[RMDB]
RNA sequence: GGGAACGACUCGAGUAGAGUCGAAAAAGAGUAACGGAGGCUUCUAAAGGUUCCCUCAGAACGGUCGGCAAUCGUUCGAAGAGUGUAAUGGCAUAAGGGAGCUUGACUGUGAGACAUACAAGUCGAUCGUAAAUUGGAUAUUCGUAUCCAAUUUACGAAAAGAAACAACAACAACAAC
Reactivity to DMS in 0.01 (KOAc 150mM, MgCl2 10mM, bicine 150mM(pH8.5), 24C), signal-to-noise 7, nucleotides 027 to 126: a060g000a090g010u020a070a070c070g000g020a080g010g000c030u000u000c030u010a080a130a090g010g010u000u000c000c010c010u010c110a190g000a020a010c020g010g010u010c070g020g020c140a120a050u000c010g010u000u010c010g000a090a120g000a080g000u020g000u020a060a070u010g000g000c020a050u010a090a120g000g000g000a060g010c040u000u000g010a050c050u000g010u010g000a120g000a070c070a080u020a070c130a070a100g010u000c030g010a160u010
Reactivity to 2A3 in 0.01 (KOAc 150mM, MgCl2 10mM, bicine 150mM(pH8.5), 24C), signal-to-noise 9, nucleotides 027 to 126: a000g110a030g020u080a050a010c030g030g010a020g020g020c020u030u010c040u120a090a050a040g050g010u030u040c010c010c000u000c050a030g010a020a010c010g010g040u050c050g070g020c030a040a050u030c020g040u040u020c030g040a140a030g030a040g050u070g010u060a140a180u120g060g000c040a050u040a100a070g020g000g000a020g000c000u040u040g040a030c010u020g020u040g070a040g010a030c010a040u190a060c040a090a060g040u030c010g030a040u000

Source: RMDB libraries RFM100 and RFMREP, as collected in RNAgym. Chemical mapping of a 177-nucleotide RNA with DMS and 2A3. Values cover nucleotides 27 to 126. The RNA was probed in 150 mM KOAc, 10 mM MgCl2 and 150 mM bicine (pH 8.5) at 24 C. Values are in units of 0.01, from 0 to 300, in steps of 10. High DMS reactivity at an A or C suggests that its Watson-Crick edge is free.